[RMDB]
RNA sequence: GGGAACGACUCGAGUAGAGUCGAAAACAAAUUACUAGCAAUAAAUAUGAGAAGUAAAAGUGGGGGUUAAUAUUACAAGACUCACUGCAUGCACAUGACUUGGAUCUUGUGAAACUUUCUUUCCCAUUUCAUAAACAUCAGAUCCAAUGCCUACCUAACCCUAAUAUCGAUUCGUCGAUAUUAGGGUAAAAGAAACAACAACAACAAC
Reactivity to 2A3 in 0.01 (KOAc 150mM, MgCl2 10mM, bicine 150mM(pH8.5), 24C), signal-to-noise 5, nucleotides 027 to 156: c010a010a070a040u220u100a070c080u120a040g060c030a080a120u180a240a130a040u240a210u200g040a070g040a180a020g030u100a040a100a040a010g060u070g000g010g010g000g020u040u060a120a060u120a070u210u110a040c030a090a040g010a060c010u010c030a040c020u020g010c020a020u080g030c040a040c020a110u140g040a060c040u030u030g000g000a010u040c010u030u050g000u020g060a050a040a050c030u070u170u040c020u030u040u020c030c010c020a020u010u110u090c040a030u120a110a130a040c020a070u080c030a020g000a020u000c000c010a000a030u050g020c010c020u060a080c050c030u070a060
Reactivity to DMS in 0.01 (KOAc 150mM, MgCl2 10mM, bicine 150mM(pH8.5), 24C), signal-to-noise 3, nucleotides 027 to 156: c020a040a090a130u010u010a080c080u000a150g010c050a130a110u000a040a130a170u010a080u000g000a090g010a120a090g010u000a030a030a100a100g060u000g020g010g020g030g000u000u000a020a080u010a170u000u010a080c090a070a110g010a040c010u010c010a040c040u000g010c050a130u000g020c080a080c130a130u000g020a060c030u000u010g010g010a010u000c020u000u020g010u010g000a100a060a090c060u000u000u000c040u000u000u000c000c020c020a250u000u000u000c020a040u010a070a110a090c070a080u010c120a040g020a050u000c020c000a030a040u010g020c020c000u000a120c040c040u000a150
Chemical mapping of a 207-nucleotide RNA with 2A3 and DMS.
For 2A3 the reverse transcriptase was SuperScript II with manganese.
The data come from the RNA Mapping Database (RMDB), library OK3TST.
For 2A3, 2,873 sequencing reads were counted.
The DMS profile rests on 5,321 reads.